[RMDB]
RNA sequence: GGGAACGACUCGAGUAGAGUCGAAAAGUGACUGAAGCCUGCUCGGUAAGAGCAAAUCCCGUAACUGCGAACAACAUCGUACGUUUCUCCCGUCAAGCAGCCCCUGUUGCUGCCUGACCCUAUUAAGCCUAUACAUUUGGUUCGCCAAAUGUAUAGGAAAAGAAACAACAACAACAAC
Reactivity to DMS in 0.01 (KOAc 150mM, MgCl2 10mM, bicine 150mM(pH8.5), 24C), signal-to-noise 5, nucleotides 027 to 126: g020u010g000a100c040u000g000a100a100g000c060c110u000g010c010u010c010g010g030u010a100a130g000a030g010c020a040a070a100u000c030c010c010g030u000a060a060c080u010g010c030g000a040a060c080a080a070c150a130u000c060g010u000a040c090g000u000u000u000c050u000c050c030c050g020u000c020a030a030g000c010a030g010c010c070c170c130u010g000u010u000g020c010u000g000c000c020u000g000a040c010c110c080u000a060u010u010a110a100g010
Reactivity to 2A3 in 0.01 (KOAc 150mM, MgCl2 10mM, bicine 150mM(pH8.5), 24C), signal-to-noise 1, nucleotides 027 to 126: g040u020g040a040c040u060g060a080a030g020c000c020u020g000c020u010c010g040g150u280a080a050g020a010g000c010a010a030a010u030c020c000c000g000u020a040a030c020u030g000c010g030a040a020c050a040a010c010a160u040c020g040u050a060c050g000u000u060u010c060u030c000c030c000g030u010c010a000a030g000c010a000g000c000c000c060c000u100g130u300u110g000c010u000g000c000c000u000g010a020c030c010c010u150a210u230u170a110a020g060

Notes:
Conditions: 150 mM KOAc, 10 mM MgCl2 and 150 mM bicine (pH 8.5), 24 C. Chemical mapping of a 177-nucleotide RNA with DMS and 2A3. For 2A3, 7,762 sequencing reads were counted. Values are in units of 0.01, from 0 to 300, in steps of 10. Values cover nucleotides 27 to 126. The DMS profile rests on 5,107 reads.